[RMDB]
RNA sequence: GGGAACGACUCGAGUAGAGUCGAAAAUUGCGCUUGAGCUUGAGUUUCGUAACUUAACACCUGGCAAUACAAACACGCGCGUCUCUCGUUAUUCGAGUAGUGCGCGUCACAAGCUGCGCCGAGGGGCGACCCCAAAGAUCUUCGGAUCUUUGGGGUCAAAAGAAACAACAACAACAAC
Reactivity to DMS in 0.01 (KOAc 150mM, MgCl2 10mM, bicine 150mM(pH8.5), 24C), signal-to-noise 2, nucleotides 027 to 126: u000u000g020c120g000c040u000u010g000a130g000c080u000u000g000a060g040u000u010u000c110g000u030a040a140c040u000u000a040a050c090a160c040c040u010g010g030c020a090a210u000a060c050a070a070a100c290a020c010g020c010g030c000g000u000c080u000c010u010c000g000u000u050a200u010u010c010g000a000g020u010a020g010u000g010c000g040c000g020u000c080a070c140a110a070g010c020u000g000c230g010c080c020g010a070g020g000g000g030c260
Reactivity to 2A3 in 0.01 (KOAc 150mM, MgCl2 10mM, bicine 150mM(pH8.5), 24C), signal-to-noise 1, nucleotides 027 to 126: u010u050g000c020g000c010u090u060g130a140g060c000u010u050g000a030g030u170u020u050c000g010u030a070a120c020u130u080a130a020c110a060c120c040u000g000g000c010a050a220u040a140c050a050a100a000c040a000c040g050c000g030c020g130u040c010u040c000u000c010g030u100u130a170u260u280c000g000a010g000u130a010g030u160g000c000g000c000g000u000c010a000c010a000a000g070c050u040g060c010g080c010c020g060a000g000g040g010g000c040
An RNA of 177 nucleotides, treated with DMS and 2A3 and read out base by base.
2A3 adducts were read by reverse transcription with SuperScript II with manganese.
The RNA was probed in 150 mM KOAc, 10 mM MgCl2 and 150 mM bicine (pH 8.5) at 24 C.
It was measured as part of the RMDB library OK2TRN.
The DMS profile rests on 997 reads.
For 2A3, 752 sequencing reads were counted.